[RMDB]
RNA sequence: GGGAACGACUCGAGUAGAGUCGAAAAGGAAAGAAAGCAUGCCUGUUUUUGCUCACCAUUUUUUCCUCAUGUCAGGUAAAAUGACUGGAUUACAUUAGGAACUUGCUCUGUAUUUGUUGAAUGAAUGAGUGAAUGAAUGCAUGAACAAAUGAGUAACGGGAACAUCUCGAUUCGUCGAGAUGUUCCCAAAAGAAACAACAACAACAAC
Reactivity to 2A3 in 0.01 (KOAc 150mM, MgCl2 10mM, bicine 150mM(pH8.5), 24C), signal-to-noise 1, nucleotides 027 to 156: g030g000a020a010a070g070a040a120a000g010c040a010u050g030c000c040u040g140u000u060u030u080u040g000c040u010c020a050c020c000a030u030u020u000u050u120u130c010c020u110c040a060u090g030u060c060a010g000g040u080a000a020a060a200u160g120a090c020u040g020g030a110u100u040a030c010a020u070u050a010g070g000a000a140c030u020u110g000c040u100c040u080g020u120a130u010u120u010g040u070u000g120a070a040u080g000a010a060u050g010a040g070u030g110a000a040u090g000a040a000u040g000c050a010u050g050a050a000c020a070a040a020u100g000a000g070u030a060a020c040

An RNA of 207 nucleotides, treated with 2A3 and read out base by base.
For 2A3 the reverse transcriptase was SuperScript II with manganese.
The data come from the RNA Mapping Database (RMDB), library OK3TST.
The RNA was probed in 150 mM KOAc, 10 mM MgCl2 and 150 mM bicine (pH 8.5) at 24 C.